[RMDB]
RNA sequence: GGGAACGACUCGAGUAGAGUCGAAAAGAAAGAAAGAAAGCUGACCCUUCUGCUGACGGAUCUUGUGGAGCACCACAGUGCAGAAGGGGAGAGAAACUUUAAUGCCGACCGUCUGGGCAGCCUUGAAAAAACGGAUUCUUCUUCGGAAGAAUCCGAACUACAUAUGGUAGUUCGCUACCAUAUGUAGAAAAGAAACAACAACAACAAC
Reactivity to DMS in 0.01 (KOAc 150mM, MgCl2 10mM, bicine 150mM(pH8.5), 24C), signal-to-noise 2, nucleotides 027 to 156: g010a100a090a130g010a130a070a060g000a040a020a040g010c040u010g000a120c010c010c010u000u010c000u010g020c020u010g010a160c100g000g010a110u010c060u000u000g050u000g030g010a190g020c170a110c010c010a040c030a080g020u010g020c010a050g000a060a000g010g000g000g000a030g010a200g000a070a060a010c030u010u000u000a050a070u000g000c010c020g010a070c010c030g000u010c160u000g010g000g010c000a050g000c010c000u000u000g000a000a070a040a100a100a150c010g010g010a040u000u000c010u000u000c010u010u010c250g000g010a010a010g000a010a020u000c010c000g020a010a020
Reactivity to 2A3 in 0.01 (KOAc 150mM, MgCl2 10mM, bicine 150mM(pH8.5), 24C), signal-to-noise 4, nucleotides 027 to 156: g040a010a040a010g070a060a090a010g090a060a110a010g060c060u070g100a090c000c000c000u000u010c000u000g010c020u050g020a020c030g080g020a120u110c070u130u080g010u010g020g040a110g170c080a080c090c010a010c000a030g050u060g050c000a000g000a000a000g000g000g020g000a010g000a000g000a010a060a000c010u060u080u070a100a040u100g010c000c010g020a080c010c010g020u030c020u060g010g010g000c010a010g030c010c030u070u110g060a100a080a010a000a010a000c010g000g000a000u000u000c000u000u000c000u030u050c150g050g000a000a010g000a000a000u000c000c000g000a000a000
Chemical mapping of a 207-nucleotide RNA with DMS and 2A3. For 2A3, 3,830 sequencing reads were counted. For DMS the reverse transcriptase was MarathonRT.